[RMDB]
RNA sequence: GGGAACGACUCGAGUAGAGUCGAAAACAAACUUGUGAAUUUGAGUAAUCAAUUCUUCAAGUUUCAGCAAUGAGUGGCAAUAUCGCUGGAGGGAAGCAAUUCAGCACAGCACGCUACCCGUAGAGAGGCGAAGCGGAUGGCACUUGGCUGGCUUUGGCCAAGCCAUACCGUUCGCGGUAUGGCUUGGAAAAGAAACAACAACAACAAC
Reactivity to DMS in 0.01 (KOAc 150mM, MgCl2 10mM, bicine 150mM(pH8.5), 24C), signal-to-noise 1, nucleotides 027 to 156: c030a070a030a000c000u000u010g060u000g010a020a000u000u000u000g050a020g010u000a260a240u000c020a020a020u000u000c040u000u020c010a010a010g000u000u000u000c050a150g000c110a100a120u000g000a100g030u010g010g050c060a130a120u000a080u000c120g010c000u000g010g010a100g000g010g000a040a060g010c120a120a170u000u000c050a110g060c040a100c060a100g010c030a100c040g030c060u000a060c020c020c020g000u000a170g020a070g000a130g010g040c130g000a060a110g030c020g000g000a060u000g000g010c050a010c140u000u000g020g020c040u020g010g020c050u000u000u000g000g020
Reactivity to 2A3 in 0.01 (KOAc 150mM, MgCl2 10mM, bicine 150mM(pH8.5), 24C), signal-to-noise 4, nucleotides 027 to 156: c030a010a010a000c000u010u010g000u030g010a010a050u080u130u140g030a030g040u230a110a180u020c000a010a010u000u010c000u150u110c010a010a010g000u010u040u070c040a030g040c000a030a280u160g010a040g010u020g030g000c030a030a050u050a090u180c080g000c030u010g000g060a050g050g030g030a050a020g040c050a040a050u120u080c000a020g010c030a010c020a070g070c080a010c050g000c000u070a080c000c000c020g100u170a040g050a010g000a060g140g070c080g040a060a000g010c010g060g020a040u020g070g030c010a020c060u040u060g070g020c010u010g020g040c020u050u040u060g140g010

This 207-nucleotide RNA was probed chemically with DMS and 2A3. For DMS the reverse transcriptase was MarathonRT. The 2A3 profile rests on 2,064 reads. In probing experiments dimethyl sulfate is read out at A N1 and C N3, which are open when not base-paired.